[RMDB]
RNA sequence: GGGAACGACUCGAGUAGAGUCGAAAACGCAUUGCUUUCUUUAUUUUCAGGCGACUUUUUUUAGAGUCCGCCAAACAGCAAGAUUGGUAGUGGUCAUUUUCGGAAUAUAAAGCUGGCAUCGCUACGGGCGUAUAGUGGCGUUCGCGCCACUAUACGCAAAAGAAACAACAACAACAAC
Reactivity to 2A3 in 0.01 (KOAc 150mM, MgCl2 10mM, bicine 150mM(pH8.5), 24C), signal-to-noise 1, nucleotides 027 to 126: c050g000c000a010u020u030g030c020u080u150u000c050u080u000u000a130u110u180u090u050c110a030g000g000c000g000a000c000u080u010u000u020u060u110u240a000g000a000g040u000c080c030g000c000c000a020a000a000c050a000g010c000a090a020g000a220u000u040g180g020u020a150g040u050g060g130u010c010a070u010u020u020u020c050g000g060a050a000u030a020u020a110a040a020g000c060u000g130g060c040a000u030c050g010c020u080a060c000g030g000